[RMDB]
RNA sequence: GGGAACGACUCGAGUAGAGUCGAAAAGGGGUCUUACUUGUCAGCACUGGAACCUUCGAAGAACUAUACUGAAGCCUCCACGGUAUAGGGAGAAGAAACAGUGCUUGGAUUUAGUAAGACGGAGGCACCCAAACUUAAGCACUUCGGUGCUUAAGAAGUACUUACCUCUCUUCGGAGAGGUAAGUACAAAAGAAACAACAACAACAAC
Reactivity to 2A3 in 0.01 (KOAc 150mM, MgCl2 10mM, bicine 150mM(pH8.5), 24C), signal-to-noise 2, nucleotides 027 to 156: g060g030g060g000u010c000u000u000a000c010u050u060g040u130c170a030g010c000a000c010u000g010g060a130a130c010c000u010u040c050g120a240a060g000a040a000c000u000a000u000a000c010u010g040a170a030g020c000c000u020c000c010a010c000g000g020u000a000u000a010g020g010g000a010g000a000a000g040a040a070a030c000a000g000u000g000c010u010u140g010g000a000u190u000u190a020g000u000a000a010g000a000c010g000g000a000g010g000c010a030c000c000c010a040a070a100c010u000u010a000a010g010c000a000c000u030u110c300g090g000u000g000c000u000u000a000a000g010a020a040